[RMDB]
RNA sequence: GGGAACGACUCGAGUAGAGUCGAAAAAUAAUGACUACCUUUGUUGGGGGUAUUGACUGAGAGGAGGCAUGUGACACAUUCUUUAUCUUGAUCUCAGAUGUGGUUACACAGGUGAUACAAGAGUAAACUAUGGUGCUAUCUUCGGAUAGCACCAUAGAAAAGAAACAACAACAACAAC
Reactivity to DMS in 0.01 (KOAc 150mM, MgCl2 10mM, bicine 150mM(pH8.5), 24C), signal-to-noise 3, nucleotides 027 to 126: a050u040a130a070u060g000a130c030u000a100c010c010u000u010u000g010u020u000g000g000g000g000g000u020a050u030u040g020a100c050u000g000a090g010a050g020g000a050g050g040c070a020u000g030u000g020a120c150a100c120a080u010u000c020u000u010u000a020u020c020u000u000g010a080u010c040u000c020a060g000a030u000g010u010g010g000u090u040a060c020a010c010a040g000g020u010g000a010u000a060c000a000a020g000a060g030u000a110a050a100
Reactivity to 2A3 in 0.01 (KOAc 150mM, MgCl2 10mM, bicine 150mM(pH8.5), 24C), signal-to-noise 3, nucleotides 027 to 126: a010u260a020a080u180g050a020c070u070a070c060c000u030u060u120g090u030u150g040g000g010g000g000u010a140u060u220g090a100c060u070g030a000g060a090g120g000a020g020g030c020a050u100g010u040g100a030c010a010c010a170u020u020c000u010u050u040a070u020c060u010u010g030a010u020c010u000c030a030g010a300u020g010u000g010g100u170u170a050c020a000c000a000g090g010u020g000a010u110a140c010a000a000g040a010g030u120a010a050a000